[RMDB]
RNA sequence: GGGAACGACUCGAGUAGAGUCGAAAAGUCAUCAACCCCCAAGGCUAAAUACGUCCCGAGUCCGAUAGCGCAAUAGUAGGGUGACCGAAAGCUGAAAAGAACCCCGAGAAGGGGAGUGAAAAGAGCCCAAUAUGCGAAAAUUCGUUUUCGCAUAUUGAAAAGAAACAACAACAACAAC
Reactivity to DMS in 0.01 (KOAc 150mM, MgCl2 10mM, bicine 150mM(pH8.5), 24C), signal-to-noise 9, nucleotides 027 to 126: g000u020c050a060u020c050a080a140c030c010c000c020c040a110a100g010g010c020u010a030a070a090u020a090c110g010u010c020c000c010g000a090g010u000c030c030g020a090u020a050g010c030g000c060a080a060u020a070g010u010a090g010g000g010u010g000a110c040c030g010a060a080a110g010c020u010g000a080a060a100a130g000a130a130c020c000c000c000g010a110g020a090a130g000g000g000g000a050g010u010g000a050a050a060a080g010a090g010c040c070
Reactivity to 2A3 in 0.01 (KOAc 150mM, MgCl2 10mM, bicine 150mM(pH8.5), 24C), signal-to-noise 5, nucleotides 027 to 126: g070u040c020a070u000c020a100a180c000c000c000c020c000a010a030g030g000c010u050a060a110a050u130a040c020g040u040c000c010c010g020a020g030u010c030c020g080a090u060a050g050c030g000c040a030a090u040a050g070u030a030g020g020g060u040g030a020c000c000g020a070a030a010g010c020u030g030a000a080a050a010g070a040a070c010c010c000c000g030a040g070a090a060g010g010g000g010a000g010u020g010a030a010a060a060g040a010g020c000c010

Source information
Chemical mapping of a 177-nucleotide RNA with DMS and 2A3. 2A3 adducts were read by reverse transcription with SuperScript II with manganese. It was measured as part of the RMDB libraries RFM100 and RFMREP.